[RMDB]
RNA sequence: GGGAACGACUCGAGUAGAGUCGAAAAAAUCCGCAGCCGGUGCGGAUCAAAGAACACCGGCAACUGCUUCCGAUUUGUCAGCAGCUGCAGCCGAGUUCAGCGGCCUGGUGUUCACCGCCGCCAUCGCCAAAUCACUUAAGUUCGCUUAAGUGAUUUGAAAAGAAACAACAACAACAAC
Reactivity to DMS in 0.01 (KOAc 150mM, MgCl2 10mM, bicine 150mM(pH8.5), 24C), signal-to-noise 8, nucleotides 027 to 126: a080a040u000c000c000g010c060a100g020c040c110g010g010u010g020c020g010g010a040u010c130a070a070a070g000a070a030c030a000c010c000g000g020c000a080a030c050u000g000c020u000u010c080c040g010a140u020u030u010g010u010c080a040g010c020a020g010c050u000g000c040a210g000c010c010g000a110g000u020u030c110a090g020c020g000g000c020c100u020g010g000u000g010u000u010c040a070c080c060g000c030c030g000c060c030a030u010c050g010c090
Reactivity to 2A3 in 0.01 (KOAc 150mM, MgCl2 10mM, bicine 150mM(pH8.5), 24C), signal-to-noise 9, nucleotides 027 to 126: a000a000u020c020c010g020c040a030g040c040c020g040g010u010g000c010g010g010a020u090c050a030a120a040g030a030a010c010a000c010c000g010g000c000a000a010c010u020g010c000u100u060c080c030g230a300u080u100u270g110u090c030a010g000c000a010g000c020u030g000c020a010g000c010c010g050a050g070u160u170c050a030g050c010g010g010c000c020u050g000g010u030g020u040u060c050a030c040c020g030c010c000g010c020c010a060u060c020g030c020

An RNA of 177 nucleotides, treated with DMS and 2A3 and read out base by base. 2A3 adducts were read by reverse transcription with SuperScript II with manganese.